[RMDB]
The record gives the reactivity of an RNA of 177 nucleotides to DMS and 2A3. 2A3 adducts were read by reverse transcription with SuperScript II with manganese. Conditions: 150 mM KOAc, 10 mM MgCl2 and 150 mM bicine (pH 8.5), 24 C. It was measured as part of the RMDB libraries RFM100 and RFMREP. DMS adducts were read by reverse transcription with MarathonRT.
RNA sequence: GGGAACGACUCGAGUAGAGUCGAAAAGUUCGACGACUUAAGGAGCCAUUCCCUUGUGGAUGGUUUUUAUUUCCGGUCGACAGAUCUCAGAUCGAAUGCUGGCAUUAGGAUUACUUGGUCUUGAGCUGGACAGGUAGUAAUUCGUUACUACCUGUCCAAAAGAAACAACAACAACAAC
Reactivity to DMS in 0.01 (KOAc 150mM, MgCl2 10mM, bicine 150mM(pH8.5), 24C), signal-to-noise 3, nucleotides 027 to 126: g010u020u000c000g020a030c010g000a060c010u000u000a040a050g000g000a020g000c000c020a020u010u010c000c000c100u010u010g020u020g020g010a020u000g010g010u000u000u000u020u000a020u010u000u000c060c040g020g020u010c000g010a090c070a120g000a100u010c010u000c050a070g020a080u000c040g010a040a050u010g010c030u000g000g000c080a080u010u010a050g000g000a070u010u010a090c100u000u000g010g000u000c010u000u000g020a070g010c210u000
Reactivity to 2A3 in 0.01 (KOAc 150mM, MgCl2 10mM, bicine 150mM(pH8.5), 24C), signal-to-noise 5, nucleotides 027 to 126: g070u070u060c000g010a010c010g000a010c010u080u080a050a030g080g000a010g090c000c000a020u160u200c020c030c000u040u230g140u190g030g010a010u000g000g000u030u020u010u010u040a050u010u040u000c050c010g060g050u030c010g000a010c010a030g050a070u020c040u010c040a040g030a080u040c020g030a070a040u110g000c050u030g030g050c040a110u080u140a080g010g050a030u060u060a080c030u040u100g010g010u010c000u030u100g020a040g000c050u020